[RMDB]
Chemical mapping of a 207-nucleotide RNA with DMS and 2A3.
RNA sequence: GGGAACGACUCGAGUAGAGUCGAAAAUUCCAUUUGAGUAUCCUGAAAACGGGCUUUUCAGCAUGGAACGUACAUAUUAAAUAGUAGGAGUGCAUAGUGGCCCGUAUAGCAGGCAUUAACCUUCCUGAAAACGUGAAAAGGUUCGCCUUUUCACGAAUCUAGUGUAAGAGUUCGCUCUUACACUAGAAAAAGAAACAACAACAACAAC
Reactivity to DMS in 0.01 (KOAc 150mM, MgCl2 10mM, bicine 150mM(pH8.5), 24C), signal-to-noise 2, nucleotides 027 to 156: u020u000c020c000a130u000u020u040g020a070g030u000a070u010c000c000u000g020a090a060a110a030c050g020g040g000c080u000u000u000u000c020a300g010c060a050u010g000g000a090a060c020g030u010a190c040a090u000a100u000u010a020a080a270u000a110g060u000a100g000g020a260g050u000g000c000a160u000a130g010u010g000g020c030c010c040g030u000a050u010a090g010c010a000g000g020c100a100u000u010a070a120c030c030u000u000c050c030u000g000a070a090a120a150c020g020u010g000a010a000a020a020g000g000u000u000c300g010c000c000u000u000u000u000c020a030c000g010a060a050
Reactivity to 2A3 in 0.01 (KOAc 150mM, MgCl2 10mM, bicine 150mM(pH8.5), 24C), signal-to-noise 2, nucleotides 027 to 156: u030u000c020c000a010u240u050u020g050a060g030u080a080u130c020c010u030g020a020a010a040a040c000g000g000g020c000u120u110u140u110c050a010g000c020a000u040g030g050a170a090c020g070u050a000c070a040u160a100u170u260a100a110a120u170a180g010u000a010g000g160a080g010u040g000c040a060u060a180g110u090g000g000c000c000c020g000u000a000u010a000g000c010a000g000g000c000a000u040u040a010a020c000c010u060u150c020c000u080g050a060a080a020a020c010g000u000g000a000a010a000a000g000g000u020u000c110g060c000c000u000u000u010u000c000a000c000g010a010a000
Background
Reactivities are given for positions 27 through 156. Conditions: 150 mM KOAc, 10 mM MgCl2 and 150 mM bicine (pH 8.5), 24 C.